[RMDB]
This 177-nucleotide RNA was probed chemically with 2A3 and DMS. The DMS profile rests on 3,537 reads. 2A3 adducts were read by reverse transcription with SuperScript II with manganese. Conditions: 150 mM KOAc, 10 mM MgCl2 and 150 mM bicine (pH 8.5), 24 C. For 2A3, 4,171 sequencing reads were counted.
RNA sequence: GGGAACGACUCGAGUAGAGUCGAAAACAAUUGAUUCGCGCGCAAAGUAUCGACAAAUCCAGCGACACGAGUCGACAUAUUCGCCAUCAUGUCAUAUGGUGCAACAAUUAUCAUAUGGUUGUGACCGAACCUCACAUAGUUUCGACUAUGUGAGGUUAAAAGAAACAACAACAACAAC
Reactivity to 2A3 in 0.01 (KOAc 150mM, MgCl2 10mM, bicine 150mM(pH8.5), 24C), signal-to-noise 5, nucleotides 027 to 126: c060a020a110u080u150g070a050u030u050c010g000c000g010c010g010c090a050a120a040g060u050a150u160c050g040a060c110a030a120a000u070c050c040a040g030c010g030a030c020a000c070g030a000g000u020c000g050a020c040a010u220a090u040u080c060g060c080c000a020u070c020a020u080g070u040c010a010u040a040u050g010g010u000g020c030a080a090c020a060a100u170u160a030u160c030a040u000a030u090g080g010u050u160g010u010g050a010c060c000g040
Reactivity to DMS in 0.01 (KOAc 150mM, MgCl2 10mM, bicine 150mM(pH8.5), 24C), signal-to-noise 3, nucleotides 027 to 126: c090a160a110u030u010g000a040u020u020c000g000c050g000c040g010c030a080a100a120g010u000a110u010c080g000a070c230a080a140a070u030c080c030a250g000c090g010a030c140a080c040g000a060g000u000c030g020a040c210a110u050a120u010u000c110g000c030c020a110u060c100a060u010g000u010c000a010u000a030u000g000g000u000g010c190a040a060c160a130a190u020u010a040u030c000a000u010a000u000g010g000u000u000g000u000g000a130c060c070g010